[RMDB]
RNA sequence: GGGAACGACUCGAGUAGAGUCGAAAACUAUUAGUCUCGAAAUAUGGCAUAAAACAAGGGGGAACGGAUCUUGCGACAUUGGUGGUUCCUCUAUGAUCCUCCAAUUACUAUAUAGCCGUUUACAAUUUCCGCUUAGAUUUUUCGAAAUCUAAGCGGAAAAAGAAACAACAACAACAAC
Reactivity to 2A3 in 0.01 (KOAc 150mM, MgCl2 10mM, bicine 150mM(pH8.5), 24C), signal-to-noise 2, nucleotides 027 to 126: c000u000a160u190u170a150g000u000c010u020c120g110a020a140a000u300a110u110g030g100c070a010u040a150a080a000a060c070a130a210g090g070g000g080g000a000a000c050g020g030a020u090c030u040u060g010c060g020a000c020a110u020u080g020g020u000g000g060u060u000c030c020u070c020u040a150u200g030a030u020c000c000u040c010c000a010a010u000u030a050c090u000a000u060a110u130a160g010c010c000g020u040u000u080a160c080a080a040u000u020
This 177-nucleotide RNA was probed chemically with 2A3. Values cover nucleotides 27 to 126. It was measured as part of the RMDB library RFM100. For 2A3, 720 sequencing reads were counted.